[RMDB]
RNA sequence: GGGAACGACUCGAGUAGAGUCGAAAACUACGCUUUAGCUGCCUAAUUGCUGCAGCUAGCUCCUCCCGCCAUCGCCCGCGUGGCGUUCGAGGGGCUCAUAUGAAGCGGGCUACGCCCAAAUCCGCCGCCUGAGGAUGAGGGAAGAGAUGAACCAGGCCACAUGGUGAGUCUUCGGACUCACCAUGUGAAAAGAAACAACAACAACAAC
Reactivity to 2A3 in 0.01 (KOAc 150mM, MgCl2 10mM, bicine 150mM(pH8.5), 24C), signal-to-noise 2, nucleotides 027 to 156: c010u180a070c110g070c110u150u110u030a000g000c000u010g000c000c020u260a300a220u250u220g070c170u150g000c030a000g000c000u000a000g000c010u010c000c010u010c000c000c000g010c010c010a030u020c070g020c010c000c010g000c010g000u000g010g050c000g030u090u090c070g000a000g020g000g020g000c000u020c010a190u300a040u200g240a060a000g000c000g000g000g000c000u000a000c000g000c000c000c000a000a050a020u010c000c020g000c000c000g000c000c010u020g010a000g000g000a000u000g010a060g000g150g030a000a000g000a000g010a010u300g110a030a030c040c000a000g020g000c000